This 177-nucleotide RNA was probed chemically with 2A3 and DMS.
2A3 adducts were read by reverse transcription with SuperScript II with manganese.
The RNA was probed in 150 mM KOAc, 10 mM MgCl2 and 150 mM bicine (pH 8.5) at 24 C.

RNA sequence: GGGAACGACUCGAGUAGAGUCGAAAAGAUAUGGAGAUGCUCAACAGCUACCGGUCGGAAACGACCGUGUAGACAUGAGCGCUCCUAAGUCAAAAGCACUAUGAUCUGUUCGCAGAUCAUAGUGCAACCGGUCAGUAAUGUUCGCAUUACUGACCGGAAAAGAAACAACAACAACAAC
Reactivity to 2A3 in 0.01 (KOAc 150mM, MgCl2 10mM, bicine 150mM(pH8.5), 24C), signal-to-noise 1, nucleotides 027 to 126: g000a030u070a010u100g030g000a010g080a130u160g000c010u000c020a060a170c080a260g030c020u030a000c010c010g000g040u030c010g010g010a110a020a070c020g000a000c000c000g000u170g000u010a000g020a050c030a050u070g000a000g020c000g020c010u000c000c020u000a160a000g060u010c080a070a070a000a120g030c010a000c000u000a000u010g030a000u000c010u020g010u100u160c300g020c180a000g000a010u000c000a000u010a020g000u010g010c000a000a020
Reactivity to DMS in 0.01 (KOAc 150mM, MgCl2 10mM, bicine 150mM(pH8.5), 24C), signal-to-noise 1, nucleotides 027 to 126: g000a000u000a300u010g010g000a000g010a050u020g020c000u010c000a030a070c300a210g030c010u000a010c000c000g000g000u000c000g000g000a060a020a070c000g000a010c000c010g000u020g000u000a000g000a020c100a120u000g010a020g000c010g000c010u000c000c000u000a030a050g000u000c000a080a080a130a170g000c000a010c000u000a000u000g000a010u000c000u000g020u010u000c180g010c040a010g010a020u000c000a000u020a000g010u010g030c000a000a010
It was measured as part of the RMDB library TTRDEL. For DMS, 920 sequencing reads were counted. Values are in units of 0.01, from 0 to 300, in steps of 10.